The record gives the reactivity of an RNA of 177 nucleotides to DMS. Values cover nucleotides 27 to 126. The RNA was probed in 150 mM KOAc, 10 mM MgCl2 and 150 mM bicine (pH 8.5) at 24 C. The data come from the RNA Mapping Database (RMDB), library OK2TRN. For DMS the reverse transcriptase was MarathonRT.
[RMDB]
RNA sequence: GGGAACGACUCGAGUAGAGUCGAAAAACGUCAAGGGCGGCCCAGGCUUCGACCCCAAUGCCGAGCCGCACCCUGGAUGCCCAGAGUGUGCGGGCGACGGCGUUCCGCGCGUGGUGCUGAUGGAUACACAGCAGCGUGGAUUCGUCCACGCUGCUGUAAAAGAAACAACAACAACAAC
Reactivity to DMS in 0.01 (KOAc 150mM, MgCl2 10mM, bicine 150mM(pH8.5), 24C), signal-to-noise 1, nucleotides 027 to 126: a210c060g000u000c040a060a070g090g000g000c060g020g010c000c010c040a110g020g000c020u030u000c110g010a220c030c050c020c020a120a040u000g000c040c000g010a300g030c040c000g020c000a000c020c020c010u020g000g000a180u010g000c130c000c000a040g000a080g030u020g000u000g000c010g020g000g020c030g000a090c060g000g000c070g000u010u000c040c040g020c100g000c070g030u000g000g000u010g010c060u010g000a120u000g020g010a100u010a030c120